[RMDB]
RNA sequence: GGGAACGACUCGAGUAGAGUCGAAAAUGUGGCCAAUACUGAUCUGGAGACUGCCAUGGAGUCAUGGGUUUAACUCUGGCACAGUGAACCAGCCCCUGUGACACUGUGAGAACAUACACAAGCCUGAAUAUCAGACAGCGUUCGCGCUGUCUGAUAUAAAAGAAACAACAACAACAAC
Reactivity to DMS in 0.01 (KOAc 150mM, MgCl2 10mM, bicine 150mM(pH8.5), 24C), signal-to-noise 2, nucleotides 027 to 126: u010g000u000g030g030c030c040a060a100u000a030c110u020g030a060u000c020u020g010g000a110g010a110c150u030g010c000c050a070u010g000g020a090g030u000c030a070u000g000g020g000u000u000u010a060a130c020u000c000u000g020g000c150a060c090a000g010u000g010a110a050c150c040a060g040c070c020c050c040u030g010u030g010a160c050a050c030u000g010u020g000a120g000a070a050c100a050u000a090c130a060c090a050a060g000c040c030u010g010a100

Description
Conditions: 150 mM KOAc, 10 mM MgCl2 and 150 mM bicine (pH 8.5), 24 C. This 177-nucleotide RNA was probed chemically with DMS. Values are in units of 0.01, from 0 to 300, in steps of 10.